[RMDB]
Chemical mapping of a 177-nucleotide RNA with DMS and 2A3. For DMS, 6,791 sequencing reads were counted. Conditions: 150 mM KOAc, 10 mM MgCl2 and 150 mM bicine (pH 8.5), 24 C. It was measured as part of the RMDB library OK1LIB. DMS (dimethyl sulfate) methylates the pairing face of unpaired adenines and cytosines. The 2A3 profile rests on 4,874 reads.

RNA sequence: GGGAACGACUCGAGUAGAGUCGAAAAGACCAGGUAUUUCUUGGGUCGAAAAACCCACGAAAUGUGUUCUCCACGUCGGCGAUGACACUAGGCUCGGAAUCCAUCAUAAUAGCCCUUGGCGUAAACAAAAUCCUAUGCAGUUCGCUGCAUAGGAUUUAAAAGAAACAACAACAACAAC
Reactivity to DMS in 0.01 (KOAc 150mM, MgCl2 10mM, bicine 150mM(pH8.5), 24C), signal-to-noise 4, nucleotides 027 to 126: g000a170c010c040a070g020g020u020a030u010u000u010c000u040u000g000g010g010u000c010g000a070a090a090a140a030c010c000c000a020c070g000a010a010a020u000g010u030g000u000u010c030u010c030c040a110c110g020u020c020g020g000c020g020a080u020g000a060c090a060c070u020a040g000g000c030u000c020g000g000a100a040u010c030c030a090u010c080a030u030a070a120u030a140g000c000c020c010u000u000g010g030c090g000u020a050a070a100c150a040
Reactivity to 2A3 in 0.01 (KOAc 150mM, MgCl2 10mM, bicine 150mM(pH8.5), 24C), signal-to-noise 5, nucleotides 027 to 126: g040a020c010c020a030g090g050u110a060u040u010u000c000u020u020g000g010g010u020c020g100a110a030a000a020a030c010c010c010a000c020g010a030a030a010u090g060u030g020u040u030c040u010c010c020a050c050g050u040c030g020g040c030g050a040u080g030a010c000a020c100u090a080g070g000c020u030c040g030g020a050a030u040c030c010a030u040c040a020u070a290a030u050a180g040c010c000c020u020u060g030g010c050g110u080a070a040a020c100a050